Chemical mapping of a 177-nucleotide RNA with DMS.
Reactivities are given for positions 27 through 126.
The RNA was probed in 150 mM KOAc, 10 mM MgCl2 and 150 mM bicine (pH 8.5) at 24 C.
It was measured as part of the RMDB library OK2TST.

RNA sequence: GGGAACGACUCGAGUAGAGUCGAAAAUAAUGCUGUUUUAGCCGCAUUGACUUGUGAUGCCGCACUAUUUACGUCAUUGACUGUUAAUGUCGCAUUUGGUGUACCAUUAAUGAUAUUUUCAGCGUUAGCACUAAGCCCACUUCGGUGGGCUUAGUGCAAAAGAAACAACAACAACAAC
Reactivity to DMS in 0.01 (KOAc 150mM, MgCl2 10mM, bicine 150mM(pH8.5), 24C), signal-to-noise 1, nucleotides 027 to 126: u010a040a040u000g010c010u000g020u010u010u000u020a100g050c080c110g000c070a030u000u010g010a140c140u000u000g020u020g010a120u010g010c100c050g020c020a020c100u000a050u000u000u000a050c060g030u000c000a020u000u000g010a150c180u000g000u000u010a040a020u010g010u000c160g000c070a040u000u000u000g000g010u000g010u010a180c090c020a040u000u020a000a080u010g000a120u000a070u000u000u000u010c020a020g010c070g020u000u000a100